Conditions: 150 mM KOAc, 10 mM MgCl2 and 150 mM bicine (pH 8.5), 24 C. Chemical mapping of a 177-nucleotide RNA with 2A3 and DMS. 2A3 adducts were read by reverse transcription with SuperScript II with manganese. Source: RMDB libraries RFM100 and RFMREP, as collected in RNAgym.

RNA sequence: GGGAACGACUCGAGUAGAGUCGAAAAGUAAGAGCGCUAGGCGGAUGCCUUGGCUUCUAGAGACGAUGAAGGACGUGAUAAGCUGCGAUAAGUUACGGUAAGCUGCUAUAUGCUUUGACCCGUAAAUUCAGCAAGUAGUGUUCGCACUACUUGCUGAAAAAGAAACAACAACAACAAC
Reactivity to 2A3 in 0.01 (KOAc 150mM, MgCl2 10mM, bicine 150mM(pH8.5), 24C), signal-to-noise 3, nucleotides 027 to 126: g080u060a060a030g020a010g010c040g040c110u010a040g090g000c040g090g160a070u240g030c000c000u020u030g010g000c000u050u000c010u030a050g000a010g010a070c030g100a060u080g060a050a020g060g010a000c000g010u010g050a030u010a100a020g010c050u030g000c030g020a070u000a170a020g080u040u020a050c040g010g020u040a050a000g020c010u000g010c040u140a090u020a010u280g050c000u080u050u040g080a100c030c000c000g000u040a050a030a100u050
Reactivity to DMS in 0.01 (KOAc 150mM, MgCl2 10mM, bicine 150mM(pH8.5), 24C), signal-to-noise 2, nucleotides 027 to 126: g030u010a090a040g000a010g000c020g000c040u010a050g010g020c000g020g020a040u070g000c030c010u000u010g000g020c020u020u000c020u000a090g010a120g020a060c130g000a070u020g010a040a170g000g030a070c030g000u000g010a030u040a070a120g000c050u000g000c030g000a070u010a050a090g000u030u000a010c060g000g020u010a040a040g020c020u000g000c090u000a100u030a040u020g000c010u000u000u010g000a130c110c000c000g000u050a050a050a110u000